[RMDB]
Source: RMDB library TTRDEL, as collected in RNAgym.
The record gives the reactivity of an RNA of 177 nucleotides to 2A3 and DMS.
The reactions ran in a buffer of 150 mM KOAc, 10 mM MgCl2 and 150 mM bicine (pH 8.5), at 24 C.
High 2A3 reactivity points to a flexible backbone, as in loops and unpaired stretches.
Values cover nucleotides 27 to 126.

RNA sequence: GGGAACGACUCGAGUAGAGUCGAAAAGAUAUGGAGAUUCAAGCUUUUGACGAGGACUCGGAAACGAGCCUCGAUAAGCUUGAAUGUCUCCUAAGUCAAAAUCACCUUUGCUUCGGCAAAGGUGAAAGCUAGUUAUCUCGUUCGCGAGAUAACUAGCAAAAGAAACAACAACAACAAC
Reactivity to 2A3 in 0.01 (KOAc 150mM, MgCl2 10mM, bicine 150mM(pH8.5), 24C), signal-to-noise 1, nucleotides 027 to 126: g010a020u070a010u120g020g010a000g010a000u010u000c000a000a000g030c000u120u250u240u160g160a110c040g000a030g030g120a300c020u020c010g000g050a050a050a020c000g020a000g010c020c010u010c000g010a000u040a040a010g010c000u030u000g000a010a000u010g000u000c000u000c000c000u000a130a010g070u040c050a070a030a000a300u010c000a000c000c000u000u000u000g000c010u070u070c260g120g000c050a040a000a000g000g020u000g020a000a000a010
Reactivity to DMS in 0.01 (KOAc 150mM, MgCl2 10mM, bicine 150mM(pH8.5), 24C), signal-to-noise 1, nucleotides 027 to 126: g000a010u030a300u010g000g010a000g010a040u000u000c000a000a020g000c010u000u000u000u000g010a150c120g000a030g040g000a120c010u000c010g000g010a100a050a070c000g020a020g000c010c000u010c010g000a060u010a000a020g000c010u000u010g010a010a040u000g000u000c000u000c000c010u000a000a110g000u010c040a070a030a160a190u000c000a000c000c000u010u000u000g000c020u000u000c230g000g010c000a000a020a010g010g010u000g020a000a020a030